An RNA of 177 nucleotides, treated with 2A3 and DMS and read out base by base. The reactions ran in a buffer of 150 mM KOAc, 10 mM MgCl2 and 150 mM bicine (pH 8.5), at 24 C. For 2A3 the reverse transcriptase was SuperScript II with manganese. 2A3 is a SHAPE reagent: it acylates the 2'-hydroxyl of flexible nucleotides of all four kinds. It was measured as part of the RMDB library OK2TRN.
RNA sequence: GGGAACGACUCGAGUAGAGUCGAAAACCACUCCUCGGCCCAGUGAGUAGUGGAGAUUCAGGUGGGGAGCUCUAGUCAGGAGCGUUUUCCUGGGCCCCAUGUGUACACCACAGGCUUCUGUCCAUCCAGAUGGACAGGAUUUCGAUCCUGUCCAUCUAAAAGAAACAACAACAACAAC
Reactivity to 2A3 in 0.01 (KOAc 150mM, MgCl2 10mM, bicine 150mM(pH8.5), 24C), signal-to-noise 2, nucleotides 027 to 126: c000c000a010c040u060c020c010u050c040g070g000c010c010c000a060g060u050g050a020g000u060a010g010u060g020g040a060g020a060u110u080c030a020g000g120u040g020g050g000g020a050g030c030u020c050u090a130g090u070c020a030g040g040a040g030c100g020u040u070u270u060c010c000u000g020g000g030c000c000c000c020a080u130g030u030g010u170a040c020a060c040c010a020c010a020g030g040c000u060u020c010u050g020u000c030c000a040u020c040c030
Reactivity to DMS in 0.01 (KOAc 150mM, MgCl2 10mM, bicine 150mM(pH8.5), 24C), signal-to-noise 4, nucleotides 027 to 126: c020c010a140c060u000c030c020u000c040g000g010c040c050c040a100g010u010g000a030g030u010a050g020u010g000g020a090g010a220u010u010c050a040g010g030u000g010g000g010g010a170g010c040u010c050u000a130g010u010c110a070g000g000a020g020c210g020u000u010u010u000c010c000u010g000g010g020c000c020c040c030a040u000g010u010g010u000a120c130a160c070c020a050c030a100g000g000c060u010u010c030u000g010u000c030c040a060u000c110c110
Description:
For DMS the reverse transcriptase was MarathonRT.